[RMDB]
RNA sequence: GGGAACGACUCGAGUAGAGUCGAAAAUCAAUGGUCUGCUUGGAGUACUCGCCAGUGGCCAGAGAGCCCUUGCAAGACAGCUCGGCCAGCAUGAGCAGACCUCUGGCCAGCUUCUCGUUGGGAGAGGAUUUAGCAUCUAGUUCGCUAGAUGCUAAAUAAAAGAAACAACAACAACAAC
Reactivity to 2A3 in 0.01 (KOAc 150mM, MgCl2 10mM, bicine 150mM(pH8.5), 24C), signal-to-noise 5, nucleotides 027 to 126: u070c020a000a060u080g010g010u020c010u060g040c020u100u150g080g040a090g040u110a140c040u010c070g060c020c010a050g010u110g040g000c020c030a030g040a010g000a020g060c010c000c000u020u070g020c030a060a040g030a120c050a050g020c020u070c100g040g000c020c020a030g020c080a160u160g040a030g030c030a020g100a050c010c000u020c000u010g000g000c010c010a020g010c030u050u020c020u010c040g080u110u110g060g050g010a060g010a020g070g020
Reactivity to DMS in 0.01 (KOAc 150mM, MgCl2 10mM, bicine 150mM(pH8.5), 24C), signal-to-noise 9, nucleotides 027 to 126: u010c060a070a150u000g010g010u000c000u000g020c010u000u000g020g010a110g010u010a110c130u010c120g010c020c040a060g010u000g020g010c010c010a100g000a240g000a110g010c020c010c020u000u010g010c070a050a070g000a050c120a100g000c010u000c090g020g000c020c020a100g010c160a070u000g000a060g010c050a060g000a060c050c020u000c040u000g000g000c010c010a090g010c020u000u000c020u000c030g010u000u000g010g010g000a060g010a070g000g000